[RMDB]
RNA sequence: GGGAACGACUCGAGUAGAGUCGAAAAGAUAUGGACCCGACCUGCCGAUAAGAGGUAUCGGAAACGAUACUCUUUUGACGGCAGCGUCGGGUCCUAAGUCAAACGCUGGGAGUUCGCUCCCAGCGAACUUCCAGACUAUCUUCGGAUAGUCUGGAAGAAAAGAAACAACAACAACAAC
Reactivity to 2A3 in 0.01 (KOAc 150mM, MgCl2 10mM, bicine 150mM(pH8.5), 24C), signal-to-noise 1, nucleotides 027 to 126: g030a000u080a060u180g000g000a000c000c010c020g020a010c000c010u020g020c000c000g090a060u020a110a010g000a000g030g060u010a000u010c010g030g080a010a030a030c000g000a000u000a010c110u160c020u200u040u030u070g080a050c040g010g010c000a000g000c000g000u000c000g000g000g020u030c000c000u000a000a010g000u010c000a020a020a040c030g010c000u020g040g010g040a020g000u080u110c170g110c100u000c010c000c000a020g000c010g000a010a010
Reactivity to DMS in 0.01 (KOAc 150mM, MgCl2 10mM, bicine 150mM(pH8.5), 24C), signal-to-noise 2, nucleotides 027 to 126: g000a050u000a300u000g000g010a000c000c000c000g020a020c000c010u000g000c010c000g020a130u000a010a020g000a020g010g010u000a000u000c000g000g000a110a130a200c010g000a010u000a010c000u020c010u000u000u010u000g020a050c030g000g010c020a000g000c190g010u000c000g020g000g010u000c000c000u000a010a080g000u000c030a090a120a240c030g010c000u010g000g000g000a020g010u000u010c200g020c000u000c000c050c000a020g000c000g000a010a060